[RMDB]
RNA sequence: GGGAACGACUCGAGUAGAGUCGAAAAAUGUCUAAAGAGUUCUAGGCUACCUAGGGCUGAAAUAAAAACAACACAUGACUGCAUUCAAUACAAGGUGUUCAUUUUAUUAGCCUCUGGAAGAGUUCCAGCAGCAGAGUGUGUUAGAAUGAGGGCGUGACUAGUCAUACGUGUUCGCACGUAUGACUAGAAAAGAAACAACAACAACAAC
Reactivity to DMS in 0.01 (KOAc 150mM, MgCl2 10mM, bicine 150mM(pH8.5), 24C), signal-to-noise 1, nucleotides 027 to 156: a140u000g050u000c020u000a090a160a170g000a170g020u000u000c000u020a020g010g010c050u010a040c040c010u000a070g010g000g010c020u000g000a020a050a080u010a040a060a070a120a190c050a050a020c010a040c010a050u000g000a210c000u020g040c010a090u000u000c080a040a140u000a030c100a100a090g000g040u000g000u010u000c100a160u000u000u000u020a190u000u010a260g000c010c020u000c000u000g000g010a010a190g010a090g030u000u000c000c040a110g030c110a070g010c030a050g000a300g040u000g020u000g030u000u000a050g020a060a040u000g000a070g000g000g020c020g030u000g010a160
Reactivity to 2A3 in 0.01 (KOAc 150mM, MgCl2 10mM, bicine 150mM(pH8.5), 24C), signal-to-noise 2, nucleotides 027 to 156: a000u000g040u000c000u020a080a070a000g020a010g000u000u010c000u030a030g010g040c060u180a230c050c010u000a010g060g000g000c020u000g050a060a000a000u090a010a040a000a020a000c070a000a000c010a000c000a030u090g190a300c070u000g000c020a100u110u220c120a140a060u090a150c020a000a080g000g020u030g050u260u210c010a070u050u100u090u210a080u020u030a020g000c000c000u000c000u030g010g010a060a040g090a120g280u260u010c010c000a000g020c030a000g000c000a000g010a080g030u010g000u000g000u010u000a090g130a050a020u100g030a080g070g000g000c020g020u030g010a020